[RMDB]
RNA sequence: GGGAACGACUCGAGUAGAGUCGAAAAGGAAGGGGGAUAUGGAACAUCUUGAGACGUUUUACGCGAAGAACUCGGAAACGAGGGAGCGUACUACGUCAAUGAUGGAUGUUCCUAAGUCAGGAAAAAAGUAUUCAUUAUCCUUCGGGAUAAUGAAUACAAAAGAAACAACAACAACAAC
Reactivity to 2A3 in 0.01 (KOAc 150mM, MgCl2 10mM, bicine 150mM(pH8.5), 24C), signal-to-noise 3, nucleotides 027 to 126: g100g030a020a040g010g020g010g010g000a020u040a050u150g000g010a000a000c000a010u010c010u010u040g060a050g000a010c020g000u000u000u020u020a010c000g040c010g130a300a100g040a070a040c010u010c010g010g020a050a060a030c010g000a000g020g000g010a020g000c010g000u000a010c010u010a000c010g010u020c010a010a080u050g000a000u040g010g020a000u000g000u010u010c000c000u000a040a010g040u040c110a030g220g000a080a090a050a020a000a040
Reactivity to DMS in 0.01 (KOAc 150mM, MgCl2 10mM, bicine 150mM(pH8.5), 24C), signal-to-noise 5, nucleotides 027 to 126: g000g000a080a090g000g000g000g010g020a110u010a210u010g010g000a030a020c000a010u000c000u000u000g000a140g010a020c000g010u000u000u000u000a000c000g020c000g000a130a130g010a110a180c000u000c010g000g010a100a100a180c000g000a010g010g000g020a080g000c000g010u000a000c020u000a000c000g010u000c000a080a070u000g010a130u000g000g000a000u000g010u000u000c000c000u010a010a050g020u010c100a100g010g020a010a060a070a070a100a080